RNA sequence: GGGAACGACUCGAGUAGAGUCGAAAAUCUACGAAGAAGUCAUCGGCGCCGUCUAGUUAGAACCAAGGGAUGGCCGGACUGCGCGAGCUGCGCGUAGAAGAGUGGCCUCAUGUUAUCCGAUACCAUCCGGACUGGGAGCCUGUCAUGGACCGCCUUGGCGCGAUAAAUAGUUCGCUAUUUAUCGCGCAAAAGAAACAACAACAACAAC
Reactivity to DMS in 0.01 (KOAc 150mM, MgCl2 10mM, bicine 150mM(pH8.5), 24C), signal-to-noise 1, nucleotides 027 to 156: u000c020u000a080c040g020a100a150g010a130a070g000u000c020a100u010c050g020g000c040g040c010c010g040u000c010u000a070g030u000u000a110g000a090a160c130c050a100a240g000g020g000a120u000g030g030c000c000g010g010a030c020u000g000c020g040c000g020a090g040c100u000g010c000g000c000g030u000a080g000a170a150g000a120g000u000g010g010c040c010u010c000a090u000g040u000u010a040u000c030c000g040a300u000a110c080c040a040u000c030c030g000g060a060c050u010g000g030g000a130g020c010c020u020g010u000c030a070u000g020g000a100c040c040g020c020c030u000u000g010
Reactivity to 2A3 in 0.01 (KOAc 150mM, MgCl2 10mM, bicine 150mM(pH8.5), 24C), signal-to-noise 2, nucleotides 027 to 156: u000c020u030a040c040g060a070a090g050a070a030g110u100c070a100u060c120g090g020c020g000c120c040g000u000c010u020a020g060u110u040a050g010a140a100c000c000a010a090g100g000g000a040u020g040g000c020c000g000g010a010c030u050g000c000g000c020g020a060g060c100u100g040c060g030c020g040u050a030g050a140a030g060a040g050u100g020g020c050c000u010c000a020u130g030u030u160a040u030c010c000g000a010u040a150c030c020a020u060c040c020g030g030a000c030u030g010g000g020a020g020c000c010u050g020u040c060a050u060g050g060a080c030c000g000c000c000u000u020g030

Background:
The record gives the reactivity of an RNA of 207 nucleotides to DMS and 2A3. For DMS, 2,221 sequencing reads were counted. For 2A3 the reverse transcriptase was SuperScript II with manganese. It was measured as part of the RMDB library OK3TST. For DMS the reverse transcriptase was MarathonRT.